Chemical mapping of a 207-nucleotide RNA with 2A3. Reactivities are given for positions 27 through 156.
RNA sequence: GGGAACGACUCGAGUAGAGUCGAAAAGGGGCCAAAUCACAAACUCAAUGCUGCAGAACCCAAGCAGAAAAGGAAGGGGCUCAGGUCCUUUAGAGCAGGGAAUUCCUUGGUCCUACAUACCUCAAAGCAUGAUCUGAAAUGGGUUAUGGGUAUAUCCUGACUUGAUUGCAUUCGUGCAAUCAAGUCAAAAAGAAACAACAACAACAAC
Reactivity to 2A3 in 0.01 (KOAc 150mM, MgCl2 10mM, bicine 150mM(pH8.5), 24C), signal-to-noise 1, nucleotides 027 to 156: g020g000g000g040c060c010a000a070a030u190c120a050c080a080a150a090c020u040c060a030a170u080g030c000u000g000c010a010g000a120a060c000c000c070a000a040g010c010a010g090a000a080a000a000g040g040a000a070g100g000g010g010c000u000c150a050g030g080u080c020c000u060u130u060a030g030a000g000c000a080g080g000g010a060a130u080u110c000c000u000u020g000g000u020c000c000u010a040c000a060u040a010c000c040u120c060a110a100a020g010c010a010u110g010a060u080c000u110g170a160a080a130u210g000g000g000u070u040a020u020g000g010g000u070a060u030a030u110c010c010